Structure probing data (2A3 and DMS) for a 177-nucleotide construct. The reactions ran in a buffer of 150 mM KOAc, 10 mM MgCl2 and 150 mM bicine (pH 8.5), at 24 C. Reactivities are given for positions 27 through 126. For DMS, 1,687 sequencing reads were counted.
RNA sequence: GGGAACGACUCGAGUAGAGUCGAAAAGCUCAGGGGUUCGCCCCUGAGCAAAAGAUACCGGUCUCGGUAUCAAAGUCAGACCGACAGACCACAGGGAACUGAAAAGGGAGGGGUUCGCCCCUCCCAAGUUUAAGGUCUAGUUCGCUAGACCUUAAACAAAAGAAACAACAACAACAAC
Reactivity to 2A3 in 0.01 (KOAc 150mM, MgCl2 10mM, bicine 150mM(pH8.5), 24C), signal-to-noise 1, nucleotides 027 to 126: g000c000u000c000a000g060g030g020g040u070u100c150g110c000c010c000c000u010g000a000g000c000a000a000a000a010g000a000u000a010c000c030g070g120u210c270u130c240g010g000u010a020u040c000a000a000a000g060u040c030a010g050a150c000c030g030a030c030a020g080a040c040c010a010c050a100g080g000g000a160a180c070u050g010a070a050a050a080g020g000g000a010g070g000g000g000u060u040c120g070c010c000c000c000u000c000c000c000a000a000
Reactivity to DMS in 0.01 (KOAc 150mM, MgCl2 10mM, bicine 150mM(pH8.5), 24C), signal-to-noise 2, nucleotides 027 to 126: g000c010u010c000a010g020g000g020g010u000u030c250g010c020c020c010c000u010g010a000g000c010a000a010a050a150g000a010u000a010c010c000g030g000u010c180u010c000g010g000u020a000u000c010a060a080a110g000u000c030a030g000a180c060c030g010a060c050a050g000a150c010c030a100c080a100g000g000g000a100a060c050u000g000a060a030a070a140g010g010g000a020g000g000g020g010u000u020c200g000c030c000c010c010u000c000c000c000a000a010